The data come from the RNA Mapping Database (RMDB), library OK3TST. This 207-nucleotide RNA was probed chemically with 2A3. The RNA was probed in 150 mM KOAc, 10 mM MgCl2 and 150 mM bicine (pH 8.5) at 24 C.
[RMDB]
RNA sequence: GGGAACGACUCGAGUAGAGUCGAAAAUAGUGCCUAGAUUAAAUAUUGGUCAACAAUUCAAGUAUUACGAUAAGGAAGAAAACAAAAUAUAUCGUGAUACAUUGGUCGAUGAUACUACACUUCGUGGCGCCGUCUUGAGCCCACCAGCUUCGCUGUCCACGGCACCACUAUUCGUAGUGGUGCCGUGAAAAGAAACAACAACAACAAC
Reactivity to 2A3 in 0.01 (KOAc 150mM, MgCl2 10mM, bicine 150mM(pH8.5), 24C), signal-to-noise 1, nucleotides 027 to 156: u170a040g060u000g000c010c030u050a090g000a060u300u250a150a060a000u130a060u040u110g090g000u090c000a030a010c040a080a080u100u120c100a240a040g000u000a000u000u000a000c000g000a000u000a040a090g170g060a080a130g060a040a300a040a030c180a050a070a110a010u160a000u010a000u030c000g010u000g030a020u030a000c040a170u000u080g000g060u020c040g020a010u000g000a010u010a130c050u060a040c010a010c100u040u270c040g000u040g000g010c130g000c020c000g000u050c150u060u090g040a020g000c050c000c000a020c000c000a030g000c000u080u260c080g000c010u100g100u080c010